[RMDB]
Overview:
Chemical mapping of a 207-nucleotide RNA with DMS and 2A3.

RNA sequence: GGGAACGACUCGAGUAGAGUCGAAAAGGUGCUCUGAAUGGAGUGCUCUACUGAGAUUAUAAAAUAGCAGGUAAGCUAUUAUCUCUUACAACAGGGCAGGGCUUGUUGGAAUAGGCGGUAAAGUCUAAAAACUACCUCACCUUCGGGUGAGGUAGAAGUACAUGUACACGUUCGCGUGUACAUGUACAAAAGAAACAACAACAACAAC
Reactivity to DMS in 0.01 (KOAc 150mM, MgCl2 10mM, bicine 150mM(pH8.5), 24C), signal-to-noise 1, nucleotides 027 to 156: g010g040u010g000c010u010c000u010g050a230a110u020g030g000a080g010u010g010c010u010c050u010a010c050u040g010a060g000a030u000u000a150u000a060a100a080a070u000a040g000c020a160g030g040u000a080a230g010c000u000a030u000u000a040u000c010u010c030u010u000a120c040a070a110c040a070g010g010g020c060a090g010g010g010c020u000u000g050u010u010g000g000a020a100u000a100g010g000c030g050g040u000a050a070a120g030u010c020u000a020a060a000a100a140c010u010a010c000c010u010c010a030c010c000u020u010c300g060g030g040u010g010a000g000g040u000a000g000a000a120
Reactivity to 2A3 in 0.01 (KOAc 150mM, MgCl2 10mM, bicine 150mM(pH8.5), 24C), signal-to-noise 4, nucleotides 027 to 156: g030g020u010g010c020u000c010u050g200a170a130u260g020g010a020g030u050g000c010u010c020u130a160c070u030g010a000g010a040u060u090a050u270a140a130a070a030u030a010g000c010a010g090g300u180a180a020g000c000u000a010u020u000a020u030c000u020c010u020u080a080c050a090a020c010a090g020g000g000c000a000g070g030g000c030u010u040g010u010u010g010g020a060a050u030a010g030g000c030g020g030u110a050a070a020g020u010c050u080a050a060a040a010a010c000u000a000c000c000u000c000a000c000c000u000u040c170g090g000g000u010g000a000g000g000u000a000g000a010a000
Source: RMDB library M2RFPK, as collected in RNAgym. The reactions ran in a buffer of 150 mM KOAc, 10 mM MgCl2 and 150 mM bicine (pH 8.5), at 24 C. Values cover nucleotides 27 to 156. As a SHAPE reagent, 2A3 marks flexible, mostly unpaired nucleotides at the ribose 2'-OH.